[RMDB]
RNA sequence: GGGAACGACUCGAGUAGAGUCGAAAAUUGCGCCUCCGAUUCGCCGUCGGCAUUUCCCCAGCAGCCAUGACCUACCAGGCUGCGGUGCUGCUCGCCGCACAGGUCAUCCCUCAUCGGGCGCGUCCUGGAUAGGGCUAUACUUUCGAGUAUAGCCCAAGUACAAUCUUUGCUUCGGCAAAGAUUGUACAAAAGAAACAACAACAACAAC
Reactivity to 2A3 in 0.01 (KOAc 150mM, MgCl2 10mM, bicine 150mM(pH8.5), 24C), signal-to-noise 1, nucleotides 027 to 156: u130u030g000c010g020c000c030u120c000c000g050a070u120u040c090g000c000c000g020u030c000g020g070c030a080u040u070u040c020c000c010c000a020g050c010a010g060c010c010a220u020g080a100c040c010u030a100c120c030a010g040g000c000u000g020c020g000g000u100g010c080u020g010c050u030c100g000c030c030g080c060a000c030a040g110g000u070c040a130u100c030c010c010u090c030a010u080c050g000g000g000c000g030c000g000u060c010c010u020g000g020a060u090a210g010g000g000c000u000a000u010a000c000u090u070u150c290g030a000g000u000a000u000a080g000c040c000c000a000a000